[RMDB]
RNA sequence: GGGAACGACUCGAGUAGAGUCGAAAAAGGCAGCUUCCCGGCUUUUAAGCUACGGACGAUGCAAACGUAGCAGGCAUCGAAUUUUCGGCCCUUCGAAAAGCUGAGAUGAGGUCAGCAAGGGAAUCAACGUAAUGACGGUAUUCGUACCGUCAUUACGAAAAGAAACAACAACAACAAC
Reactivity to DMS in 0.01 (KOAc 150mM, MgCl2 10mM, bicine 150mM(pH8.5), 24C), signal-to-noise 2, nucleotides 027 to 126: a080g000g000c030a020g000c030u020u000c030c000c000g010g030c040u000u010u000u000a090a090g010c010u000a020c020g010g010a090c080g000a040u000g020c120a060a100a130c040g000u020a010g010c000a100g020g000c060a060u020c040g010a070a100u000u000u010u000c020g020g000c080c010c070u020u000c140g010a090a080a070a060g010c010u000g000a050g000a080u000g000a090g000g010u000c020a060g000c060a060a040g000g020g010a040a100u020c100a070a190
Reactivity to 2A3 in 0.01 (KOAc 150mM, MgCl2 10mM, bicine 150mM(pH8.5), 24C), signal-to-noise 1, nucleotides 027 to 126: a000g040g040c010a000g000c040u000u010c000c000c000g020g000c000u060u050u030u160a090a030g010c000u010a020c020g130g000a040c050g080a090u170g100c070a140a050a030c010g010u000a010g000c010a020g050g000c020a040u060c080g020a170a130u040u040u040u090c000g010g010c010c020c020u050u100c040g080a060a070a020a000g000c010u010g010a010g020a150u080g030a020g030g090u030c020a010g010c020a050a070g060g000g030a030a090u110c060a060a080

The record gives the reactivity of an RNA of 177 nucleotides to DMS and 2A3. 2A3 is a SHAPE reagent: it acylates the 2'-hydroxyl of flexible nucleotides of all four kinds. The reactions ran in a buffer of 150 mM KOAc, 10 mM MgCl2 and 150 mM bicine (pH 8.5), at 24 C. It was measured as part of the RMDB library M2PK90.